Chemical mapping of a 207-nucleotide RNA with 2A3 and DMS. As a SHAPE reagent, 2A3 marks flexible, mostly unpaired nucleotides at the ribose 2'-OH. DMS adducts were read by reverse transcription with MarathonRT. 2A3 adducts were read by reverse transcription with SuperScript II with manganese. Values are in units of 0.01, from 0 to 300, in steps of 10. For DMS, 3,969 sequencing reads were counted. Values cover nucleotides 27 to 156.

[RMDB]
RNA sequence: GGGAACGACUCGAGUAGAGUCGAAAACUCCACGCUGGGUAAUGGACGACGGCGGCGUGUGGCGAACAGGGAUACCGGUAGUCAGUGUCUAGAACAUCCCAAGGGGCGGCGGAGCUAGCACCCCGACAAAACGGGCACAAGUUCGCUUGUGCCCGAAGGAUUGUUAAAUGUUCGCAUUUAACAAUCCAAAAGAAACAACAACAACAAC
Reactivity to 2A3 in 0.01 (KOAc 150mM, MgCl2 10mM, bicine 150mM(pH8.5), 24C), signal-to-noise 4, nucleotides 027 to 156: c010u030c000c010a030c020g030c030u050g040g000g040u140a140a120u100g050g010a020c030g010a010c020g020g050c010g020g010c030g020u090g020u050g030g050c050g010a090a040c050a090g000g000g040a030u060a130c010c040g030g030u040a030g040u040c050a020g040u020g020u080c020u040a040g010a080a030c020a080u050c000c020c040a080a090g000g020g000g010c040g040g000c040g030g060a060g040c030u010a010g000c000a060c000c010c000c000g010a010c060a020a070a040a020c000g000g000g000c000a000c000a000a010g020u040u060c150g000c140u000u000g000u000g000c010c000c000g000a000a000
Reactivity to DMS in 0.01 (KOAc 150mM, MgCl2 10mM, bicine 150mM(pH8.5), 24C), signal-to-noise 2, nucleotides 027 to 156: c040u010c000c020a050c040g000c010u000g000g010g030u000a080a110u000g040g020a090c010g030a050c060g000g030c030g040g000c070g000u000g020u000g030g050c060g000a050a160c050a140g010g010g030a180u000a040c050c010g000g010u000a090g030u010c000a090g020u010g010u030c040u010a100g000a050a090c030a120u010c010c010c000a130a180g040g000g040g010c020g000g010c040g040g000a080g030c040u000a090g030c030a090c010c000c030c000g000a160c130a070a040a100a180c010g010g030g000c010a030c030a000a050g010u000u010c300g030c000u000u000g000u000g010c020c010c010g000a010a010